The data come from the RNA Mapping Database (RMDB), library OK1LIB. Structure probing data (DMS and 2A3) for a 177-nucleotide construct. Conditions: 150 mM KOAc, 10 mM MgCl2 and 150 mM bicine (pH 8.5), 24 C.

RNA sequence: GGGAACGACUCGAGUAGAGUCGAAAAGCUCUGCGAGACAGAACGAACAACAAAGAGAGAUCGAAAAUCUUAGAGGAGAGAACGAAUCUGUCGACUUCACUAGGACAUUGUCGAUCAGAGGUCCAAAGACCUUUGAUGGGUUCGCCUAUCGAAGGUCAAAAGAAACAACAACAACAAC
Reactivity to DMS in 0.01 (KOAc 150mM, MgCl2 10mM, bicine 150mM(pH8.5), 24C), signal-to-noise 9, nucleotides 027 to 126: g010c020u000c010u000g000c030g000a200g010a090c070a030g010a090a040c050g000a070a150c080a090a130c180a050a100a100g000a100g010a120g000a040u000c020g010a070a040a090a180u010c010u000u010a020g000a060g010g000a010g000a110g000a130a050c020g010a110a110u050c060u040g000u000c010g000a170c010u000u010c010a090c010u000a010g000g000a040c150a090u020u010g020u000c020g000a080u010c020a060g000a070g000g000u010c020c030a040a100a100
Reactivity to 2A3 in 0.01 (KOAc 150mM, MgCl2 10mM, bicine 150mM(pH8.5), 24C), signal-to-noise 9, nucleotides 027 to 126: g020c010u000c000u010g010c030g030a040g020a030c020a030g040a060a000c020g040a040a030c020a040a010c020a020a270a010g120a020g010a000g010a030u020c020g050a030a030a020a050u010c010u020u020a020g010a030g040g010a010g010a010g030a060a030c020g020a050a120u110c100u130g050u030c020g030a060c000u020u010c010a010c040u020a010g000g030a010c020a140u080u140g070u040c000g000a010u030c010a000g020a010g040g030u010c010c000a020a040a030

For DMS, 56,634 sequencing reads were counted. DMS adducts were read by reverse transcription with MarathonRT.